[RMDB]
RNA sequence: GGGAACGACUCGAGUAGAGUCGAAAAUGCUGUGUUGUGGCGGGGGCGAAACAGGAUCGACAAGGGUGUAAAGAUCGCUCUUUUACUCGGCAUGAUACCACCGUUAUCGGGUCAACAGAGUAGUUGCUAGGGGAACGGGUGUUCGCACCCGUUCCAAUGAUUCUAAAACUUUCGAGUUUUAGAAUCAAAAAGAAACAACAACAACAAC
Reactivity to DMS in 0.01 (KOAc 150mM, MgCl2 10mM, bicine 150mM(pH8.5), 24C), signal-to-noise 2, nucleotides 027 to 156: u000g020c040u000g040u010g030u000u000g050u000g030g040c020g000g020g060g060g010c030g020a060a070a090c060a120g050g020a070u000c010g000a070c060a020a080g000g000g040u000g020u000a070a070a150g000a090u000c030g010c050u000c030u000u000u000u000a080c020u000c020g000g040c030a140u000g020a080u000a070c020c000a200c030c020g030u010u020a070u010c090g030g020g010u000c020a070a120c080a080g000a040g020u010a170g000u010u000g010c020u000a130g030g010g000g000a010a010c010g020g000g020u000g020u000u000c300g050c000a030c030c000c000g070u000u000c010c000a000a070
Source: RMDB library M2RFPK, as collected in RNAgym. An RNA of 207 nucleotides, treated with DMS and read out base by base.